This 177-nucleotide RNA was probed chemically with 2A3. Source: RMDB library M2PK90, as collected in RNAgym. The RNA was probed in 150 mM KOAc, 10 mM MgCl2 and 150 mM bicine (pH 8.5) at 24 C. For 2A3 the reverse transcriptase was SuperScript II with manganese.

[RMDB]
RNA sequence: GGGAACGACUCGAGUAGAGUCGAAAAAUGAACGUGGUGGGCGUAAGUUAGUAGAAGAUCUAAUGGUACGCGGUGGGUUUUCGACUGUACUCCAAACCACCACCACCACCAAGUCGUUCCCACCGAACGGUUACGAUCGAUUCGUCGAUCGUAACCGAAAAGAAACAACAACAACAAC
Reactivity to 2A3 in 0.01 (KOAc 150mM, MgCl2 10mM, bicine 150mM(pH8.5), 24C), signal-to-noise 1, nucleotides 027 to 126: a000u300g030a020a000c020g030u000g010g010u000g010g020g000c000g010u010a060a030g010u000u010a000g010u050a040g100a300a030g040a090u040c010u020a010a010u050g210g060u070a000c000g000c030g000g000u000g000g020g000u040u000u000u030c010g010a000c000u070g060u130a010c000u000c040c000a040a070a000c000c000a010c030c000a000c010c000a010c010c000a010c010c000a020a000g000u000c000g000u000u000c000c010c000a000c000c030g040a040a060